[RMDB]
RNA sequence: GGGAACGACUCGAGUAGAGUCGAAAACGUCACACGGAGAAGUGUGUGGUAGUUGACGCCCCAGGGCUCCUCCGUGAGGUGGGUAUCUCCGAUGCCAUUGUCAACAAUUUCUUCCUCGCUGGCGGCGGAUCACCACUCAGUUCGCUGAGUGGUGAUCAAAAGAAACAACAACAACAAC
Reactivity to DMS in 0.01 (KOAc 150mM, MgCl2 10mM, bicine 150mM(pH8.5), 24C), signal-to-noise 2, nucleotides 027 to 126: c040g010u000c050a170c050a030c000g010g000a020g010a030a030g010u000g000u010g040u010g020g000u000a100g020u010u000g000a070c030g010c010c000c020c040a110g020g000g000c040u000c020c010u000c010c000g010u010g020a050g040g010u010g020g050g010u000a220u010c020u020c010c050g020a150u010g020c050c020a060u010u000g010u000c050a030a050c060a090a130u010u000u010c080u000u000c050c040u000c040g010c110u000g000g010c040g020g000c040g010
Reactivity to 2A3 in 0.01 (KOAc 150mM, MgCl2 10mM, bicine 150mM(pH8.5), 24C), signal-to-noise 1, nucleotides 027 to 126: c000g000u000c020a010c000a000c010g000g060a060g020a130a020g040u030g000u000g030u080g130g010u040a110g010u040u020g050a010c030g040c000c000c000c020a050g100g130g010c000u000c020c000u000c000c020g030u020g010a020g010g030u060g000g030g040u090a020u070c120u000c070c040g000a010u050g060c020c000a070u090u100g040u040c010a020a020c020a030a060u030u080u050c030u070u030c030c020u000c000g050c020u030g010g010c000g040g000c000g050